[RMDB]
RNA sequence: GGGAACGACUCGAGUAGAGUCGAAAAGCGCAGGGGCAGCAGAUGGAGCGCGUGCUUGACAACCUCGAAGAGAUGCGCUUCGACAUCAAGAAAGGAGGACAGGUCAUCCGCGACAUCACUCGCGGACGAUAAAAAUCCGAUUCGUCGGAUUUUUAUCAAAAGAAACAACAACAACAAC
Reactivity to DMS in 0.01 (KOAc 150mM, MgCl2 10mM, bicine 150mM(pH8.5), 24C), signal-to-noise 7, nucleotides 027 to 126: g010c070g020c050a050g000g000g000g020c070a070g010c060a080g010a090u010g010g010a040g000c030g010c050g020u000g010c030u000u000g010a200c110a090a130c140c090u000c070g010a070a180g010a090g000a070u000g000c070g000c040u000u000c040g010a090c110a050u000c070a060a090g010a050a080a090g010g000a060g000g000a070c100a050g000g000u010c080a160u000c010c010g000c010g000a020c160a090u010c190a120c280u000c000g010c000g010g000a030c210
Reactivity to 2A3 in 0.01 (KOAc 150mM, MgCl2 10mM, bicine 150mM(pH8.5), 24C), signal-to-noise 3, nucleotides 027 to 126: g070c050g000c040a020g020g000g020g010c040a020g000c010a020g050a130u140g010g030a030g000c020g000c020g020u090g120c010u030u030g010a040c040a090a100c030c070u060c080g040a070a030g000a010g010a040u060g030c020g000c000u010u010c010g040a050c010a060u080c040a040a070g080a160a070a020g060g030a010g000g020a020c030a020g000g060u060c020a040u000c010c000g010c000g000a010c000a150u150c040a030c080u010c000g010c000g010g010a010c030
Conditions: 150 mM KOAc, 10 mM MgCl2 and 150 mM bicine (pH 8.5), 24 C. Structure probing data (DMS and 2A3) for a 177-nucleotide construct. It was measured as part of the RMDB library OK2TRN.